[RMDB]
RNA sequence: GGGAACGACUCGAGUAGAGUCGAAAAUUACUAUUAAUAGUGUGGUCCAAAAGGAUGGUGUUGAAAACACUCCUCCUCACUAUUUUACUCUUGGAUGCAAAAUUUUAACGCUCACCCCACGCAACAAGCUCUAGUAUAGGUUCGCCUAUACUAGAGCAAAAGAAACAACAACAACAAC
Reactivity to DMS in 0.01 (KOAc 150mM, MgCl2 10mM, bicine 150mM(pH8.5), 24C), signal-to-noise 1, nucleotides 027 to 126: u000u000a160c060u000a130u000u000a050a010u000a020g020u020g000u000g000g020u020c130c110a050a100a180a020g000g030a070u020g050g010u000g030u000u000g000a150a090a180a150c020a010c010u000c000c000u000c000c000u000c000a030c030u010a000u000u000u000u000a050c120u010c110u000u000g000g010a060u000g000c040a030a010a080a160u000u000u000u050a060a180c140g030c000u000c060a120c060c060c000c060a020c070g010c030a080a060c040a060a080
Reactivity to 2A3 in 0.01 (KOAc 150mM, MgCl2 10mM, bicine 150mM(pH8.5), 24C), signal-to-noise 2, nucleotides 027 to 126: u090u010a060c010u030a040u270u070a000a020u000a030g000u020g000u010g000g020u090c130c000a090a050a020a030g010g010a010u110g080g080u020g060u030u100g180a130a060a050a000c010a000c000u020c000c000u050c010c000u030c000a000c010u000a010u030u080u040u070a050c020u030c000u090u070g030g060a010u080g040c010a050a120a160a170u050u240u140u120a120a030c060g020c010u000c030a040c000c000c010c000a000c010g040c000a030a100c020a020a010